[RMDB]
RNA sequence: GGGAACGACUCGAGUAGAGUCGAAAAGGUGGAGAUGCCAUGCCGACCCGAAGAGGAAAGAAGGACGCGAGACGCGAACCUGUGAGUGGAAACCCGCUUUAUUCACUGGGGACGACAACUCUGGGGAGAAGGUUAGCCUUCGGGCUAACCAAAAGAAACAACAACAACAAC
Reactivity to 2A3 in 0.01 (KOAc 150mM, MgCl2 10mM, bicine 150mM(pH8.5), 24C), signal-to-noise 5, nucleotides 027 to 129: g070g010u020g010g050a070g010a090u100g050c050c020a060u130g020c000c030g020a070c000c010c020g010a030a010g020a040g010g000a030a050a000g030a030a020g010g050a020c010g040c020g060a070g010a050c080g020c060g040a050a080c000c000u030g020u030g060a010g000u030g040g000a100a010a060c020c020c000g030c000u120u100u090a130u080u130c080a030c110u100g020g000g000g060a010c020g020a020c000a070a030c020u010c030u040g020g010g030g010a050g050a070a030
Reactivity to DMS in 0.01 (KOAc 150mM, MgCl2 10mM, bicine 150mM(pH8.5), 24C), signal-to-noise 4, nucleotides 027 to 129: g050g050u010g040g000a070g030a120u040g040c000c060a070u000g020c000c000g050a060c030c030c070g030a090a060g000a080g000g020a090a020a050g020a080a050g020g040a090c070g000c100g020a050g040a150c160g000c060g040a090a130c050c000u040g020u000g020a060g000u020g000g000a060a110a160c060c010c020g040c200u000u000u000a000u020u050c060a050c080u000g020g010g040g030a170c100g000a110c080a030a060c050u010c040u000g000g000g000g000a080g010a050a030